The record gives the reactivity of an RNA of 177 nucleotides to DMS and 2A3.
2A3 adducts were read by reverse transcription with SuperScript II with manganese.
Reactivities are rounded to 0.1 and cut off at 0 and 3.
Source: RMDB library M2PK50, as collected in RNAgym.
The reactions ran in a buffer of 150 mM KOAc, 10 mM MgCl2 and 150 mM bicine (pH 8.5), at 24 C.
The DMS profile rests on 7,062 reads.

[RMDB]
RNA sequence: GGGAACGACUCGAGUAGAGUCGAAAAGGCCUGACGUUCGCGUCAGGCCAAACCUGGAGGAGGAUGGAACACUGGGGGGAGCCGAUACCCAGGACAGGGCAGAAACUGUCCCGUUCGCGGGACAGAAGUCAAUAUGUUUGUUCGCAAACAUAUUGACAAAAGAAACAACAACAACAAC
Reactivity to DMS in 0.01 (KOAc 150mM, MgCl2 10mM, bicine 150mM(pH8.5), 24C), signal-to-noise 5, nucleotides 027 to 126: g000g010c000c000u000g010a020c000g030u000u010c210g030c010g020u000c010a010g010g020c000c010a010a010a020c030c010u010g020g010a060g000g010a060g000g010a050u000g000g000a100a070c090a070c070u010g000g010g010g010g000g010a090g010c040c040g000a100u000a070c040c020c020a070g010g010a070c080a060g000g010g020c110a100g010a090a090a170c010u000g000u000c000c000c000g000u010u010c160g020c010g010g000g000a010c000a000g000a040a090
Reactivity to 2A3 in 0.01 (KOAc 150mM, MgCl2 10mM, bicine 150mM(pH8.5), 24C), signal-to-noise 3, nucleotides 027 to 126: g010g010c020c000u010g020a000c010g020u040u070c270g030c010g110u000c000a010g010g040c000c010a000a000a000c000c000u010g030g030a040g020g010a020g030g010a050u080g010g040a080a010c050a020c140u080g000g000g000g000g020g010a000g000c010c000g010a050u090a100c000c010c010a010g000g030a020c030a020g010g020g020c020a020g060a060a060a020c000u000g000u020c000c010c000g000u020u040c230g020c000g020g000g000a000c000a000g000a010a000